[RMDB]
RNA sequence: GGGAACGACUCGAGUAGAGUCGAAAACAGGAAAACUGGAAAGUCAAAAACAAGGGUGGCUGCGGUCAAAGAACGCAUGACCAAAUCGCAAAUACUUGCUCACUUGGCUGAAAGCACCGAGCUGACAGUGCUAUAUAAAUUUCGAUUUAUAUAGCACAAAAGAAACAACAACAACAAC
Reactivity to DMS in 0.01 (KOAc 150mM, MgCl2 10mM, bicine 150mM(pH8.5), 24C), signal-to-noise 7, nucleotides 027 to 126: c030a070g000g000a110a050a110a100c040u000g010g000a080a130a090g010u010c040a030a070a090a090a070c110a070a100g010g000g010u000g000g010c020u000g000c130g000g000u000c020a030a050a080g010a110a100c200g000c040a040u000g010a090c130c090a030a090a090u010c170g000c130a060a060a080u010a100c070u000u000g010c020u000c110a100c090u000u000g000g000c020u010g000a070a080a030g010c060a070c040c020g000a090g010c120u000g010a070c120a090
Reactivity to 2A3 in 0.01 (KOAc 150mM, MgCl2 10mM, bicine 150mM(pH8.5), 24C), signal-to-noise 5, nucleotides 027 to 126: c020a010g030g060a120a090a010a100c020u080g000g080a130a060a040g040u040c030a010a000a040a100a170c030a060a100g110g030g020u030g050g000c010u010g010c010g000g010u030c030a080a050a030g020a050a010c040g000c040a030u050g050a060c030c050a020a060a070u150c070g000c060a040a110a020u110a120c030u030u040g000c000u010c030a060c030u010u030g010g000c000u020g010a080a070a000g010c010a010c030c020g020a020g040c040u040g030a020c020a040